[RMDB]
The record gives the reactivity of an RNA of 177 nucleotides to 2A3 and DMS. The 2A3 profile rests on 6,644 reads. It was measured as part of the RMDB library OK1LIB. The RNA was probed in 150 mM KOAc, 10 mM MgCl2 and 150 mM bicine (pH 8.5) at 24 C. For DMS the reverse transcriptase was MarathonRT. For 2A3 the reverse transcriptase was SuperScript II with manganese. High 2A3 reactivity points to a flexible backbone, as in loops and unpaired stretches. Reactivities are given for positions 27 through 126.

RNA sequence: GGGAACGACUCGAGUAGAGUCGAAAACGAAAACCGAUGGAGUUAUCCGUCGGCGCUGGCCACAGAUCACCAUCACGGCGAAUAGGUCACGCCGACCGCGAGGUUGACGUAUUCGGCCGGCACGUCACUCUCCUAAGCUGUUCGCAGCUUAGGAGAGAAAAGAAACAACAACAACAAC
Reactivity to 2A3 in 0.01 (KOAc 150mM, MgCl2 10mM, bicine 150mM(pH8.5), 24C), signal-to-noise 7, nucleotides 027 to 126: c030g050a010a000a000a030c020c000g010a000u020g020g010a030g080u210u200a170u170c010c000g000u000c000g000g000c000g000c020u000g010g000c010c000a050c030a060g080a140u030c020a020c050c000a150u110c020a000c040g010g000c010g020a040a110u160a160g070g040u130c070a050c100g040c030c000g090a160c040c010g030c050g010a020g010g030u100u140g020a000c000g080u080a140u070u150c040g010g000c000c000g020g000c040a010c030g050u040c000a050
Reactivity to DMS in 0.01 (KOAc 150mM, MgCl2 10mM, bicine 150mM(pH8.5), 24C), signal-to-noise 3, nucleotides 027 to 126: c090g020a110a040a110a120c010c000g050a000u020g000g040a130g000u010u050a110u000c030c000g000u000c030g000g000c080g010c060u010g000g010c040c040a180c100a140g000a100u020c020a130c050c040a140u010c130a120c110g030g030c090g020a050a110u030a130g000g010u000c070a070c050g020c040c000g000a020c040c020g010c160g000a100g000g010u000u020g000a030c040g060u000a110u000u020c150g000g000c000c020g000g030c000a140c110g060u000c050a070